Source: RMDB library TTRDES, as collected in RNAgym.
This 177-nucleotide RNA was probed chemically with DMS and 2A3.
The reactions ran in a buffer of 150 mM KOAc, 10 mM MgCl2 and 150 mM bicine (pH 8.5), at 24 C.
For DMS the reverse transcriptase was MarathonRT.
Reactivities are given for positions 27 through 126.
The 2A3 profile rests on 2,084 reads.
RNA sequence: GGGAACGACUCGAGUAGAGUCGAAAAAAGAUAUGGAUCCCACUGAGCUAUAUUCAGGCUUGGAUUUAGGGAGUCGGAAACGACUCCCUUGUCAGCCUGAUAUAGUAAGGUGGGAUCCUAAGUCAAACCUAAUCUAGCUGUUCGCAGCUAGAUUAGGAAAAGAAACAACAACAACAAC
Reactivity to DMS in 0.01 (KOAc 150mM, MgCl2 10mM, bicine 150mM(pH8.5), 24C), signal-to-noise 2, nucleotides 027 to 126: a080a070g000a010u000a300u010g000g010a010u000c000c000c000a000c010u000g010a300g000c000u000a000u000a010u020u000c030a000g000g000c010u010u000g020g000a020u010u000u000a000g030g000g020a050g020u010c000g000g000a100a070a250c000g000a010c020u000c000c000c010u000u000g020u000c000a040g000c000c000u000g010a000u000a000u000a000g000u010a000a300g000g010u000g000g000g010a000u000c000c010u000a010a050g010u010c070a080a100a200
Reactivity to 2A3 in 0.01 (KOAc 150mM, MgCl2 10mM, bicine 150mM(pH8.5), 24C), signal-to-noise 1, nucleotides 027 to 126: a020a020g080a050u050a040u070g000g000a020u010c000c020c000a000c020u040g000a040g030c000u000a000u020a020u240u300c000a000g040g000c030u230u290g300g000a090u300u300u030a000g000g000g000a010g010u000c020g010g000a080a090a060c000g000a000c000u040c010c000c030u020u000g000u000c000a000g010c040c000u010g000a000u000a000u000a000g020u020a040a000g030g000u000g040g010g000a000u010c000c020u000a010a000g000u000c020a090a000a050